[RMDB]
RNA sequence: GGGAACGACUCGAGUAGAGUCGAAAAUCAGCGCUCAAUCUCAAACUGAGCUGCGCUAUUACAAAAUACGUAGACCUGGUUGACAAGGUGUGUAAUUGAUCUUGAUGCUCUGAGUUGCCUGGGGCCCAGCAGAUGAUAACUUCGGUUAUCAUCUGCUAAAAGAAACAACAACAACAAC
Reactivity to 2A3 in 0.01 (KOAc 150mM, MgCl2 10mM, bicine 150mM(pH8.5), 24C), signal-to-noise 7, nucleotides 027 to 126: u090c010a010g010c010g000c010u010c040a130a120u040c060u020c080a140a170a100c060u050g020a010g050c010u020g010c010g000c040u040a050u060u060a130c100a070a200a020a020u060a030c030g010u020a010g100a170c010c010u040g030g010u040u050g020a050c030a040a020g040g010u030g020u050g060u140a130a190u090u170g050a040u030c010u040u060g020a070u140g060c030u000c050u080g040a040g040u090u100g090c020c020u020g010g000g070g000c020c000c010
Reactivity to DMS in 0.01 (KOAc 150mM, MgCl2 10mM, bicine 150mM(pH8.5), 24C), signal-to-noise 4, nucleotides 027 to 126: u010c060a030g030c060g010c000u000c020a080a050u030c130u020c070a070a060a080c090u000g000a040g010c030u020g030c010g010c230u020a000u000u000a120c300a110a090a040a060u010a030c070g000u000a040g000a090c010c010u000g000g030u000u000g000a100c110a070a080g010g000u010g020u010g030u020a070a100u030u010g000a060u000c080u020u000g020a140u050g010c020u020c040u020g000a060g000u010u000g020c100c020u000g000g010g000g000c020c040c040

Structure probing data (2A3 and DMS) for a 177-nucleotide construct.
It was measured as part of the RMDB library OK1LIB.
For 2A3, 5,154 sequencing reads were counted.
For DMS, 5,882 sequencing reads were counted.
The RNA was probed in 150 mM KOAc, 10 mM MgCl2 and 150 mM bicine (pH 8.5) at 24 C.